About this RNA: Chemical mapping of a 177-nucleotide RNA with DMS and 2A3. The RNA was probed in 150 mM KOAc, 10 mM MgCl2 and 150 mM bicine (pH 8.5) at 24 C. Values cover nucleotides 27 to 126. For 2A3, 5,302 sequencing reads were counted.
RNA sequence: GGGAACGACUCGAGUAGAGUCGAAAACACUUUUACAACAGUGAAACCUGGCGCAGCAUUUAGUGUGUUAGCAUGCUAUAAUGGUCGUCCGACUGGUACAUUCACUGUUGUAAUGCGCCCUAACUACGACCUAAAUAGACUUCGGUCUAUUUAGGUCAAAAGAAACAACAACAACAAC
Reactivity to DMS in 0.01 (KOAc 150mM, MgCl2 10mM, bicine 150mM(pH8.5), 24C), signal-to-noise 2, nucleotides 027 to 126: c120a090c110u000u010u000u010a020c000a000a030c010a000g020u010g000a010a070a050c020c000u000g010g000c010g020c210a060g020c000a000u000u000u000a010g020u000g020u000g000u010u010a120g010c020a000u010g000c000u000a020u020a010a020u000g000g000u000c050g020u020c100c090g010a080c110u010g000g000u000a060c130a300u000u000c020a010c000u000g000u000u000g020u000a010a010u000g010c090g010c020c000c000u010a070a060c160u010a090c250
Reactivity to 2A3 in 0.01 (KOAc 150mM, MgCl2 10mM, bicine 150mM(pH8.5), 24C), signal-to-noise 4, nucleotides 027 to 126: c030a020c020u070u070u050u020a000c010a020a000c000a000g000u010g000a050a000a020c010c010u020g020g000c010g030c040a100g010c000a030u030u010u000a010g000u000g010u010g050u030u050a100g170c010a010u010g020c000u030a030u040a250a020u020g140g090u070c030g060u060c030c020g050a080c080u040g000g000u090a050c020a120u020u010c000a000c000u010g000u000u000g000u010a000a000u000g000c030g060c000c010c010u020a090a060c080u090a040c100